Structure probing data (2A3 and DMS) for a 177-nucleotide construct. For 2A3 the reverse transcriptase was SuperScript II with manganese. The RNA was probed in 150 mM KOAc, 10 mM MgCl2 and 150 mM bicine (pH 8.5) at 24 C. Reactivities are given for positions 27 through 126. The 2A3 profile rests on 1,430 reads.
RNA sequence: GGGAACGACUCGAGUAGAGUCGAAAAGGCCGGUGCCGCUACCGACUGAGAAGAACGUGUAUUGCGUCAUCCGCUCACCGCAUAAGUACAAGGACUCGCGGGAGCACUUCGAGAUGCGCACACACAAGGUACUCACCCUUUUCGAAGGGUGAGUACCAAAAGAAACAACAACAACAAC
Reactivity to 2A3 in 0.01 (KOAc 150mM, MgCl2 10mM, bicine 150mM(pH8.5), 24C), signal-to-noise 2, nucleotides 027 to 126: g020g000c020c050g030g030u070g000c120c140g010c070u100a050c000c000g000a050c050u140g080a040g050a250a030g050a080a050c080g010u010g000u060a090u060u140g020c030g070u220c030a000u000c010c000g000c020u030c010a300c030c000g000c020a070u120a240a050g090u090a140c050a050a150g130g120a070c070u060c100g000c010g010g010g010a010g000c030a010c060u190u210c110g270a300g000a140u030g000c000g030c020a020c010a000c000a000c000a010a080
Reactivity to DMS in 0.01 (KOAc 150mM, MgCl2 10mM, bicine 150mM(pH8.5), 24C), signal-to-noise 1, nucleotides 027 to 126: g000g020c000c020g000g000u000g020c100c120g000c120u010a050c010c000g000a050c050u010g000a210g030a140a030g060a120a070c100g020u020g000u000a110u000u010g000c000g000u010c130a000u000c000c040g000c030u000c000a110c000c020g020c050a120u000a110a020g010u000a090c080a150a170g030g000a030c060u000c150g020c000g000g040g000a010g000c000a090c160u000u000c190g010a160g000a040u000g020c000g000c000a020c260a000c050a080c050a050a120